[RMDB]
Structure probing data (2A3) for a 207-nucleotide construct.

RNA sequence: GGGAACGACUCGAGUAGAGUCGAAAACGGUUACGCCUUCUUUACCGUUAUCAAGGAAGGUACUCGGCCAUGCUAAGGGAAGCAUUAUUCCUUAGGCGCAUGUCGCCGCCAGCAUGGUGUGGGGGGAAAAAGUAUGCUGGGUUCGCCCAGCAUACAACGCAUCUCACUACUUCGGUAGUGAGAUGCGAAAAGAAACAACAACAACAAC
Reactivity to 2A3 in 0.01 (KOAc 150mM, MgCl2 10mM, bicine 150mM(pH8.5), 24C), signal-to-noise 1, nucleotides 027 to 156: c000g000g050u090u080a050c250g000c000c000u000u030c000u010u000u030a040c000c010g300u190u160a010u050c110a000a000g040g000a000a000g010g030u090a150c030u020c040g030g040c020c020a000u000g030c000u000a050a050g010g000g010a010a010g030c030a200u140u070a300u190u170c000c000u010u060a060g000g000c010g000c130a220u300g100u300c030g010c020c000g140c010c020a000g000c010a000u000g000g070u060g050u120g030g000g000g050g040g040a000a220a000a000a000g000u020a000u000g000c000u000g000g000g020u040u130c070g060c040c000c000a000g000c000a000u000a000c000a000a000
High 2A3 reactivity points to a flexible backbone, as in loops and unpaired stretches.